[RMDB]
RNA sequence: GGGAACGACUCGAGUAGAGUCGAAAAUGCAUAACCAGUAAUGGUCUUGUACUAAGCUGCUCGGACAAUGAAGCCCUUCCGAAAGGAGAAGUUUGAACCGUGAGGGGAAAGCAACUGCUAUUAGUGUGCUUGAGUUCUAAUUCGUUAGAACUCAAGCAAAAGAAACAACAACAACAAC
Reactivity to 2A3 in 0.01 (KOAc 150mM, MgCl2 10mM, bicine 150mM(pH8.5), 24C), signal-to-noise 6, nucleotides 027 to 126: u070g010c010a030u030a080a030c020c000a020g100u150a040a130u060g030g000u020c030u040u050g020u030a050c020u060a050a030g030c030u020g010c010u040c010g010g020a020c020a020a180u120g060a050a000g040c010c000c000u050u040c010c020g070a080a040a030g070g030a070g020a080a040g030u040u100u110g060a050a030c030c010g030u060g060a080g000g020g000g040a040a000a000g020c020a050a060c020u060g040c020u040a080u130u110a140g130u090g030u030
Reactivity to DMS in 0.01 (KOAc 150mM, MgCl2 10mM, bicine 150mM(pH8.5), 24C), signal-to-noise 3, nucleotides 027 to 126: u020g060c030a040u000a150a130c020c000a020g010u030a100a090u000g010g010u010c060u010u000g000u000a050c140u010a090a150g010c040u020g020c020u000c030g030g000a090c090a050a140u000g010a090a110g030c020c000c010u000u000c010c000g020a070a070a060g000g000a030g020a040a050g010u000u000u010g010a300a180c070c030g040u020g000a090g060g010g010g000a100a000a020g000c030a060a100c030u020g000c060u020a090u040u030a100g020u020g000u010